[RMDB]
RNA sequence: GGGAACGACUCGAGUAGAGUCGAAAAGACACAUCUAGUACCAUGUCAUGUCGUACCAUGAGACAGCCAUGCUAGUCUAGGAUCGCACUCGUCUAGCGAUCCAUGCACUAGGAUCUGGAUCGUACUCCGUCAUAGCACUUUUCGAAGUGCUAUGACGAAAAGAAACAACAACAACAAC
Reactivity to DMS in 0.01 (KOAc 150mM, MgCl2 10mM, bicine 150mM(pH8.5), 24C), signal-to-noise 5, nucleotides 027 to 126: g030a110c110a060c100a060u010c040u010a080g020u010a070c280c060a080u000g000u000c050a090u000g020u000c020g020u000a180c090c080a110u000g010a140g010a060c000a050g010c110c100a020u000g010c000u000a010g010u010c010u000a300g010g000a010u020c010g010c010a080c100u010c200g010u010c140u010a040g010c000g000a010u000c000c000a040u000g000c210a010c010u010a030g010g000a080u010c050u000g000g000a070u000c050g010u000a060c050u000c120
Reactivity to 2A3 in 0.01 (KOAc 150mM, MgCl2 10mM, bicine 150mM(pH8.5), 24C), signal-to-noise 5, nucleotides 027 to 126: g050a000c020a000c010a100u030c030u080a030g040u030a070c040c010a040u040g050u040c070a170u060g020u010c060g040u050a090c050c040a090u140g010a010g000a060c020a010g000c050c020a020u070g060c010u000a010g000u000c000u020a080g000g000a010u000c020g010c020a030c050u140c060g210u090c290u120a040g000c000g000a000u000c000c000a010u020g010c050a000c010u000a010g050g010a040u060c020u030g020g000a020u030c040g000u030a060c030u000c030
Structure probing data (DMS and 2A3) for a 177-nucleotide construct. The reactions ran in a buffer of 150 mM KOAc, 10 mM MgCl2 and 150 mM bicine (pH 8.5), at 24 C. 2A3 adducts were read by reverse transcription with SuperScript II with manganese. For 2A3, 9,278 sequencing reads were counted. The DMS profile rests on 4,470 reads. It was measured as part of the RMDB library OK2TRN. Reactivities are given for positions 27 through 126.